RNA sequence: GGGAACGACUCGAGUAGAGUCGAAAAAGAGCGUAAAUACUCUGUCUGGAUCGGAGGCUCCAUCCUGGCCUCUCUGUCCACCUUCCAGCAGAUGUGGAUCAGCAAGCAGGAGUACGAUGAGUCCGGCCGAUAUCGAAGGAUUCGUCCUUCGAUAUCGAAAAGAAACAACAACAACAAC
Reactivity to 2A3 in 0.01 (KOAc 150mM, MgCl2 10mM, bicine 150mM(pH8.5), 24C), signal-to-noise 4, nucleotides 027 to 126: a000g040a020g000c070g050u110a040a110a020u130a090c010u010c010u030g090u100c070u080g050g000a050u050c020g020g000a030g040g000c000u000c040c020a120u050c000c030u020g100g000c020c010u010c000u000c030u030g010u000c010c000a030c010c040u060u020c030c030a060g000c040a010g040a120u110g040u040g020g030a120u110c040a030g030c060a050a040g050c020a040g010g060a010g010u080a130c030g040a040u100g020a000g090u000c010c000g020g010c030
Reactivity to DMS in 0.01 (KOAc 150mM, MgCl2 10mM, bicine 150mM(pH8.5), 24C), signal-to-noise 5, nucleotides 027 to 126: a030g010a040g010c050g000u010a070a100a140u010a090c030u000c000u000g010u010c040u000g020g000a170u000c180g010g000a140g000g010c020u000c070c050a110u010c070c050u000g000g010c020c010u000c050u000c060u000g000u000c020c030a060c040c090u000u010c020c030a120g010c070a050g010a040u000g010u000g000g010a040u000c050a040g010c230a070a070g020c070a050g010g000a060g010u000a040c100g020a200u010g010a100g010u000c020c030g000g020c150

Structure probing data (2A3 and DMS) for a 177-nucleotide construct. DMS adducts were read by reverse transcription with MarathonRT. 2A3 adducts were read by reverse transcription with SuperScript II with manganese. Source: RMDB library OK2TRN, as collected in RNAgym. For DMS, 6,174 sequencing reads were counted. Reactivities are given for positions 27 through 126. Conditions: 150 mM KOAc, 10 mM MgCl2 and 150 mM bicine (pH 8.5), 24 C.